[RMDB]
RNA sequence: GGGAACGACUCGAGUAGAGUCGAAAAAUAGACCAGGAGAAAGAACUCCUUGAGAAGUUGGCGUGGCGAACAGAGGCAGUCUUAGCGACGGACGUCACUUCCUUCUUGUUACUUAAAUUGCUGGGGGGUAGAUAAAUUACUUCGGUAAUUUAUCUACAAAAGAAACAACAACAACAAC
Reactivity to DMS in 0.01 (KOAc 150mM, MgCl2 10mM, bicine 150mM(pH8.5), 24C), signal-to-noise 4, nucleotides 027 to 126: a110u000a130g000a210c040c040a060g000g000a000g000a090a070a130g000a080a080c020u000c000c000u000u000g010a060g010a050a020g020u010u000g020g020c300g010u010g000g000c030g010a080a070c070a060g000a210g020g010c040a080g000u010c100u010u000a130g020c070g000a140c130g020g010a150c020g010u010c010a010c010u000u000c010c020u000u000c050u000u000g000u010u010a060c230u000u000a020a040a080u000u000g000c080u000g010g010g000g000g020
Reactivity to 2A3 in 0.01 (KOAc 150mM, MgCl2 10mM, bicine 150mM(pH8.5), 24C), signal-to-noise 2, nucleotides 027 to 126: a010u110a040g080a060c050c010a000g010g000a000g020a000a190a000g070a040a110c010u010c000c000u020u070g050a070g010a050a040g020u150u090g050g000c020g000u020g010g030c020g010a020a000c040a030g100a060g300g030c050a040g040u070c070u080u160a020g030c040g040a010c000g000g030a010c000g000u000c000a000c000u060u090c000c000u030u030c000u050u070g090u070u030a040c000u060u060a060a050a110u100u070g080c090u100g000g000g000g010g000